[RMDB]
RNA sequence: GGGAACGACUCGAGUAGAGUCGAAAAGUUGCCGACGAACCUUCCAACCUACCAAACGUCGUUUUCGACAACCUUCCAACCUUCCAAUCUACUCGAGAGGAGGAGGAGGAGGAGGAGGAGGAAUUAAUCACAACAUUUAGUUCGCUAAAUGUUGUGAAAAAGAAACAACAACAACAAC
Reactivity to 2A3 in 0.01 (KOAc 150mM, MgCl2 10mM, bicine 150mM(pH8.5), 24C), signal-to-noise 4, nucleotides 027 to 126: g040u030u050g130c030c010g000a050c020g020a070a090c000c020u000u030c010c040a100a070c030c010u120a160c030c010a080a070a060c040g030u030c010g020u060u000u070u140c020g020a000c020a080a060c010c000u090u030c050c010a100a130c040c030u110u030c020c010a050a040u020c000u050a060c020u030c080g030a030g010a020g070g020a030g030g020a040g000g030a060g000g000a070g000g060a030g020g080a030g020g050a030g040g050a020a040u160u140a120a050
Reactivity to DMS in 0.01 (KOAc 150mM, MgCl2 10mM, bicine 150mM(pH8.5), 24C), signal-to-noise 3, nucleotides 027 to 126: g040u000u010g020c050c030g020a120c160g020a100a050c040c030u000u010c020c030a110a120c070c020u000a060c060c050a070a080a120c130g020u000c020g000u000u000u000u000c020g020a040c110a080a110c010c010u000u000c020c030a110a100c040c020u010u020c010c030a150a210u000c010u000a030c050u020c040g020a030g020a300g020g010a090g000g000a170g000g030a120g000g000a140g000g000a090g000g000a180g000g010a110g000g000a270a040u000u010a040a110
Source: RMDB library M2PK90, as collected in RNAgym. This 177-nucleotide RNA was probed chemically with 2A3 and DMS. For 2A3, 4,067 sequencing reads were counted.